[RMDB]
RNA sequence: GGGAACGACUCGAGUAGAGUCGAAAAAUGAGCCUCGUGCCGAGGAGAGGCCGGAGACGGAGAGGCAGGAGGUCCCGAGGAGUAUCCAAGCAAAGAAGGGGAAGGAUCUCGAGGAAAACAUCUCCCAUAGGAACGGUCUUCGGACCGUUCAAAAGAAACAACAACAACAAC
Reactivity to DMS in 0.01 (KOAc 150mM, MgCl2 10mM, bicine 150mM(pH8.5), 24C), signal-to-noise 2, nucleotides 027 to 129: a080u070g020a240g010c040c030u010c110g000u010g120c140c080g020a000g020g040a040g040a120g030g000c000c000g040g000a060g010a000c100g040g000a090g020a130g010g000c260a050g010g080a050g010g030u000c000c010c000g000a120g010g020a060g000u010a070u000c100c050a090a070g050c250a140a110a140g030a050a100g000g000g000g000a120a120g000g020a000u060c000u000c050g010a070g030g040a110a030a140a090c090a000u030c130u030c000c000c070a220u060a110g040
Reactivity to 2A3 in 0.01 (KOAc 150mM, MgCl2 10mM, bicine 150mM(pH8.5), 24C), signal-to-noise 2, nucleotides 027 to 129: a000u060g010a010g010c000c020u060c030g060u090g040c020c010g000a000g070g000a040g010a000g010g070c010c000g040g000a040g040a030c030g020g010a050g000a040g020g000c040a040g000g030a000g040g030u050c000c000c000g010a060g000g020a010g020u090a020u000c050c030a030a040g070c050a050a120a080g010a020a020g060g010g000g030a030a060g000g000a050u000c010u020c000g000a050g000g050a010a030a000a010c060a080u020c060u010c000c000c020a040u070a040g110